Structure probing data (DMS) for a 177-nucleotide construct. It was measured as part of the RMDB library OK2TST. For DMS the reverse transcriptase was MarathonRT. Reactivities are given for positions 27 through 126.

[RMDB]
RNA sequence: GGGAACGACUCGAGUAGAGUCGAAAAUGGGUAUGCGUUGUAAAUGGACAUAAUAACCCUCCUUUAAAACGCCGUUGUGUAACAGCUAACCCUAUUAACCGCAGGCCUAUUACCGCUUGGCGUUGAAGUCAACCACGGAUUUCGAUCCGUGGUUGACAAAAGAAACAACAACAACAAC
Reactivity to DMS in 0.01 (KOAc 150mM, MgCl2 10mM, bicine 150mM(pH8.5), 24C), signal-to-noise 1, nucleotides 027 to 126: u000g010g010g030u000a090u010g000c180g020u000u000g040u000a030a090a050u030g000g000a090c150a080u020a120a100u010a140a140c160c050c020u010c030c000u000u000u050a050a010a030a010c030g030c010c060g040u000u020g000u010g000u000a040a010c050a110g020c090u000a100a120c070c000c010u000a120u030u020a040a060c080c030g000c040a070g010g010c010c040u000a050u010u010a060c150c120g000c180u000u000g010g000c070g040u010u000g000a080a140